RNA sequence: GGGAACGACUCGAGUAGAGUCGAAAAACGUCUAACUUACCUCUGUGACCUGUUUCUGCAACCAGGGGUGUUGCAAUGGAUGCUUUUGUCUUGAGGAUGGGACCUUUCAAGAAACAGAUUCACUGAGUGAUGAUGUCUGGUUCGCCAGACAUCAUCAAAAAGAAACAACAACAACAAC
Reactivity to 2A3 in 0.01 (KOAc 150mM, MgCl2 10mM, bicine 150mM(pH8.5), 24C), signal-to-noise 6, nucleotides 027 to 126: a000c060g070u060c090u090a110a100c030u110u120a050c020c010u010c020u040g000u010g010a030c010c010u010g020u030u050u030c030u090g010c020a020a040c010c000a080g040g070g120g060u080g050u020u010g000c030a090a080u070g010g020a040u080g110c120u100u090u090u150g070u050c030u050u130g150a140g110g060a110u140g080g020g020a020c000c000u060u100u010c050a040a000g010a010a020a000c010a010g000a080u060u060c000a010c040u060g020a000g050
Reactivity to DMS in 0.01 (KOAc 150mM, MgCl2 10mM, bicine 150mM(pH8.5), 24C), signal-to-noise 2, nucleotides 027 to 126: a060c090g030u030c050u000a260a090c090u040u000a140c110c010u000c000u000g060u000g020a050c300c020u010g030u030u000u010c000u000g000c090a040a030c030c050a230g060g010g000g030u000g060u010u000g030c000a140a070u020g000g000a000u020g010c220u000u020u030u030g000u000c000u000u010g020a120g030g000a110u000g000g000g020a040c040c060u010u050u010c080a110a090g000a040a000a020c020a000g010a070u020u010c000a040c010u000g030a030g020